This 207-nucleotide RNA was probed chemically with DMS and 2A3. The RNA was probed in 150 mM KOAc, 10 mM MgCl2 and 150 mM bicine (pH 8.5) at 24 C. 2A3 adducts were read by reverse transcription with SuperScript II with manganese.
RNA sequence: GGGAACGACUCGAGUAGAGUCGAAAAAUCCUCAGGUUCAUAAGCGUGAUGAUUGGGUGUUCAUGCUCCAUGCAUGACAUGUGCCUCCUUUGAACCUUGUUACGACCUGGGCACAUUACCCAUCUGAAAAAGACGUUCGCGUUCGCGCGAACGUCAACUUAUCAUGGUUCUUCGGAACCAUGAUAAGAAAAGAAACAACAACAACAAC
Reactivity to DMS in 0.01 (KOAc 150mM, MgCl2 10mM, bicine 150mM(pH8.5), 24C), signal-to-noise 2, nucleotides 027 to 156: a090u010c020c010u000c060a070g010g010u000u010c020a050u000a080a070g030c100g000u000g020a100u000g000a080u000u000g040g040g010u010g020u010u000c010a020u000g010c010u000c260c270a160u010g030c020a020u000g010a040c270a110u000g000u000g020c010c010u000c050c040u000u000u000g010a040a030c000c020u000u010g020u000u010a130c110g000a100c090c070u020g010g030g030c030a030c060a090u010u000a070c020c000c010a050u010c030u000g000a110a080a070a110a210g010a020c000g000u000u000c000g040c010g000u000u010c300g000c040g030c000g000a020a010c000g020u000c010a000a040
Reactivity to 2A3 in 0.01 (KOAc 150mM, MgCl2 10mM, bicine 150mM(pH8.5), 24C), signal-to-noise 5, nucleotides 027 to 156: a000u020c000c000u020c010a000g000g000u000u000c010a020u070a270a030g050c120g150u120g100a080u040g020a010u120u280g010g010g010u050g040u060u040c000a000u000g010c000u080c200c090a150u300g000c000a000u000g000a010c010a020u010g000u000g010c010c000u050c000c010u040u000u030g010a000a010c000c010u010u120g060u030u110a110c120g020a070c020c080u120g000g000g010c010a010c010a010u070u160a030c000c010c010a010u000c020u040g070a090a050a020a020a040g010a000c000g000u000u000c000g000c010g050u040u050c240g010c000g000c000g100a000a000c000g000u000c000a000a000